About this RNA
This 177-nucleotide RNA was probed chemically with DMS and 2A3. For 2A3, 1,402 sequencing reads were counted. Reactivities are given for positions 27 through 126. 2A3 is a SHAPE reagent: it acylates the 2'-hydroxyl of flexible nucleotides of all four kinds. It was measured as part of the RMDB library OK1LIB. Conditions: 150 mM KOAc, 10 mM MgCl2 and 150 mM bicine (pH 8.5), 24 C. The DMS profile rests on 3,994 reads.
[RMDB]
RNA sequence: GGGAACGACUCGAGUAGAGUCGAAAAUAAUAAAACCAGAAGAUUUAUGAAAGGAACCAACGAAUGGCCGUGGUGUGAGGAAGGAGACAGCGCUUCCAUGAGUCUCAACGUUAAUCUGAAAAGGCCGGGCUCAGUAUAUAUUCGUAUAUACUGAGCCAAAAGAAACAACAACAACAAC
Reactivity to DMS in 0.01 (KOAc 150mM, MgCl2 10mM, bicine 150mM(pH8.5), 24C), signal-to-noise 3, nucleotides 027 to 126: u050a070a100u040a070a050a070a120c010c020a120g010a130a070g000a110u010u000u010a050u020g010a090a090a120g000g000a090a070c060c060a060a080c120g000a050a080u030g000g010c040c020g050u010g000g000u010g000u010g010a050g010g000a070a050g020g010a090g000a030c070a080g010c060g000c010u000u000c020c020a040u010g000a150g020u010c010u020c050a080a150c110g000u010u000a050a110u010c040u000g000a050a130a110a110g000g000c090c060g010
Reactivity to 2A3 in 0.01 (KOAc 150mM, MgCl2 10mM, bicine 150mM(pH8.5), 24C), signal-to-noise 3, nucleotides 027 to 126: u240a020a050u040a020a050a000a020c070c030a080g070a070a000g010a060u060u220u110a110u280g030a110a070a080g040g020a020a050c060c010a030a000c070g100a100a060u080g010g030c050c000g030u040g000g030u040g020u080g050a030g050g050a090a020g070g060a120g010a010c030a050g020c000g050c040u070u060c000c010a030u090g060a020g050u040c010u000c050a000a020c020g000u000u040a030a070u030c030u030g080a100a100a080a060g070g000c000c000g000